An RNA of 177 nucleotides, treated with 2A3 and DMS and read out base by base. It was measured as part of the RMDB library TTRDES. The reactions ran in a buffer of 150 mM KOAc, 10 mM MgCl2 and 150 mM bicine (pH 8.5), at 24 C. Reactivities are given for positions 27 through 126. For 2A3 the reverse transcriptase was SuperScript II with manganese.
RNA sequence: GGGAACGACUCGAGUAGAGUCGAAAAGAUAUGGACGUUGGUGACUUUUGACGGCUUCCGGUCGGAAACGACCGUAGAGCCGAUAAGUCACACAACGUCCUAAGUCAAACUUUGAGUUCGCUCAAAGCGACUAAACUGUGUUCGCACAGUUUAGUCGAAAAGAAACAACAACAACAAC
Reactivity to 2A3 in 0.01 (KOAc 150mM, MgCl2 10mM, bicine 150mM(pH8.5), 24C), signal-to-noise 3, nucleotides 027 to 126: g020a040u080a080u160g020g000a000c000g010u000u000g000g020u000g020a000c010u120u040u150u270g300a180c060g000g000c000u110u050c050c000g010g000u030c010g000g000a070a070a050c000g010a000c000c000g000u030a090g010a000g050c000c000g000a010u010a000a020g000u000c010a000c000a000c000a000a000c010g010u000c010c000u000a010a000g000u000c010a030a040a080c010u040u000u020g020a010g020u070u200c300g010c100u010c030a020a030a030g020
Reactivity to DMS in 0.01 (KOAc 150mM, MgCl2 10mM, bicine 150mM(pH8.5), 24C), signal-to-noise 4, nucleotides 027 to 126: g010a050u010a300u010g000g000a000c000g040u000u000g010g010u000g020a010c000u000u000u010u020g020a200c120g010g000c000u000u000c300c010g010g020u000c000g010g010a080a130a180c000g000a010c000c000g010u010a050g000a040g010c010c000g010a050u020a000a010g020u000c000a000c010a030c000a000a020c000g020u000c000c000u010a010a100g010u000c030a150a100a300c000u000u000u000g010a020g010u000u030c300g010c020u000c010a010a000a030g010